This 177-nucleotide RNA was probed chemically with DMS and 2A3.
2A3 adducts were read by reverse transcription with SuperScript II with manganese.
It was measured as part of the RMDB library M2PK50.
RNA sequence: GGGAACGACUCGAGUAGAGUCGAAAACGUGCUCUCUUCGGAGAGCACGAAAGAAAGCACAAAGCACCAAUUAAAGGAGGUGCAGGGUGCAACCACCAAUAAAAAGAAGUAGGUUCGCCUACUUCAAGAUCAACUAAUACUUCGGUAUUAGUUGAUCAAAAGAAACAACAACAACAAC
Reactivity to DMS in 0.01 (KOAc 150mM, MgCl2 10mM, bicine 150mM(pH8.5), 24C), signal-to-noise 4, nucleotides 027 to 126: c010g020u000g010c000u000c000u000c000u010u020c190g030g010a000g020a000g010c000a000c010g000a000a050a110g000a090a120a130g010c000a010c000a060a110a110g000c000a010c010c000a090a230u000u010a120a150a160g010g010a300g000g010u000g000c010a060g000g010g000u010g000c010a040a120c080c070a160c080c090a080a060u000a020a090a090a120a100g000a010a000g020u000a010g000g000u000u010c230g020c000c000u010a000c000u000u010c000a050a060
Reactivity to 2A3 in 0.01 (KOAc 150mM, MgCl2 10mM, bicine 150mM(pH8.5), 24C), signal-to-noise 6, nucleotides 027 to 126: c000g000u010g010c010u010c000u000c000u040u050c160g050g000a000g000a000g000c000a000c000g000a000a000a000g010a010a040a010g000c010a010c020a030a120a000g000c000a000c000c010a040a060u240u230a250a130a120g160g040a080g010g000u000g000c000a000g010g040g010u010g000c010a020a020c010c020a030c020c030a070a100u200a200a120a030a010a020g010a000a000g010u000a000g030g030u020u060c200g060c050c000u010a000c000u010u010c000a000a010